[RMDB]
RNA sequence: GGGAACGACUCGAGUAGAGUCGAAAAGUGUUUGGCUCCGGUGUCCCAGGCAUGUCACGGGACCGCCCAGGUGUGGGCGGUGGCAUCCCGUGUCUGUUUUCCGGGAGGGACCCGGCUUUCGAUGUGGCGUAAAAGCAAUGUUCGCAUUGCUUUUACGAAAAGAAACAACAACAACAAC
Reactivity to 2A3 in 0.01 (KOAc 150mM, MgCl2 10mM, bicine 150mM(pH8.5), 24C), signal-to-noise 1, nucleotides 027 to 126: g040u060g080u100u100u100g090g000c050u020c030c020g020g040u150g010u030c020c000c000a000g010g000c000a000u200g010u020c000a010c000g000g000g020a000c020c000g030c000c000c030a060g180g260u300g050u050g130g000g000c040g000g000u000g060g010c060a080u050c010c000c000g020u000g000u000c000u000g000u020u170u120u020c040c020g080g040g040a120g070g050g020a000c000c000c000g000g020c000u120u030u010c060g070a080u070g040u090g160g110
Reactivity to DMS in 0.01 (KOAc 150mM, MgCl2 10mM, bicine 150mM(pH8.5), 24C), signal-to-noise 2, nucleotides 027 to 126: g010u000g020u010u000u010g020g000c110u010c020c030g020g020u010g010u000c030c000c010a170g000g000c060a020u010g000u010c020a020c000g000g000g000a080c010c000g010c000c000c000a070g020g030u020g010u000g000g000g010c000g000g010u010g010g000c200a200u010c010c010c000g010u000g000u000c010u000g000u010u000u000u010c050c060g000g000g010a150g010g000g010a040c020c000c010g010g010c280u000u000u000c050g020a100u010g020u000g000g020
Source: RMDB library RFMREP, as collected in RNAgym. Chemical mapping of a 177-nucleotide RNA with 2A3 and DMS. For DMS, 3,210 sequencing reads were counted. DMS adducts were read by reverse transcription with MarathonRT. 2A3 adducts were read by reverse transcription with SuperScript II with manganese.